[RMDB]
RNA sequence: GGGAACGACUCGAGUAGAGUCGAAAACUGGAGGCAGCUUGCUGAAUGACUCCUUGGCUGAAGGAGGAGCUUGGGUGGGAUCAGACACCAUGUGGCGGCCUCCCUUCAUCUGGUGGAAGUGCCCUGGGUAUUCCCACCACUUCGGUGGUGGGAAUACAAAAGAAACAACAACAACAAC
Reactivity to 2A3 in 0.01 (KOAc 150mM, MgCl2 10mM, bicine 150mM(pH8.5), 24C), signal-to-noise 1, nucleotides 027 to 126: c020u000g020g010a030g000g010c030a000g030c080u160u250g000c000u160g080a180a060u120g080a150c000u050c010c000u050u040g150g000c070u150g110a040a040g080g020a030g000g070a020g000c010u110u070g010g010g050u040g000g040g040a110u150c040a050g140a130c000a000c030c050a060u220g050u080g070g050c020g020g180c000c000u000c000c000c000u030u040c000a050u020c010u090g150g050u080g050g050a060a040g030u020g050c030c010c000u050g250g000
Reactivity to DMS in 0.01 (KOAc 150mM, MgCl2 10mM, bicine 150mM(pH8.5), 24C), signal-to-noise 1, nucleotides 027 to 126: c030u000g020g020a020g020g010c040a060g000c060u010u000g000c060u010g030a060a100u010g000a170c030u000c000c000u000u000g020g020c090u020g020a080a050g000g000a050g020g010a130g020c030u010u000g010g010g010u000g020g020g010a100u010c190a060g010a200c050a030c030c020a000u010g020u000g010g050c040g010g000c020c030u000c030c020c030u000u000c130a090u000c050u000g000g030u000g010g000a060a120g030u000g000c020c000c030u000g000g010